RNA sequence: GGGAACGACUCGAGUAGAGUCGAAAAUCCGCUUUAUGCGAGGCUUAAUUCCUUUGUUGAGGCCGUAUUUUUGCGAAGUCUGCCCAAAGCACGUAGUGUUUGAAGAUUUCGGUCCUAUGCAAUAUGAACCCAUGAACCAUGUCAGGUCCUGACGGAACAUAAUACCCCAGUUCGCUGGGGUAUUAUGAAAAGAAACAACAACAACAAC
Reactivity to 2A3 in 0.01 (KOAc 150mM, MgCl2 10mM, bicine 150mM(pH8.5), 24C), signal-to-noise 2, nucleotides 027 to 156: u000c010c000g010c040u110u250u120a190u220g050c040g050a050g020g000c050u040u030a040a020u130u090c000c000u070u100u040g060u030u020g020a040g030g030c010c000g000u040a090u030u070u030u110u130g050c010g000a040a000g010u020c040u000g050c000c030c050a050a050a010g050c010a010c040g210u170a080g020u010g070u040u040u110g080a050a020g010a040u070u050u070c010g030g000u080c010c020u080a080u150g000c020a020a020u020a050u270g060a060a050c050c000c000a010u060g080a030a040c020c000a040u070g040u060c010a010g040g040u020c020c040u050g020a050c030g040g010a020a010
Reactivity to DMS in 0.01 (KOAc 150mM, MgCl2 10mM, bicine 150mM(pH8.5), 24C), signal-to-noise 3, nucleotides 027 to 156: u010c020c030g030c030u000u000u000a050u010g020c000g010a070g010g040c050u000u010a050a100u000u000c020c030u000u010u000g020u000u000g020a130g010g040c000c030g020u000a040u000u000u000u010u000g050c020g000a060a070g030u010c010u000g000c030c070c030a060a050a100g040c020a030c030g010u000a070g030u000g020u000u000u000g010a050a070g000a110u000u000u000c040g020g020u000c030c020u000a140u000g010c040a060a090u000a090u000g000a060a100c000c000c010a120u000g000a070a060c020c030a100u020g020u010c080a120g020g020u000c010c020u000g000a130c050g010g010a090a230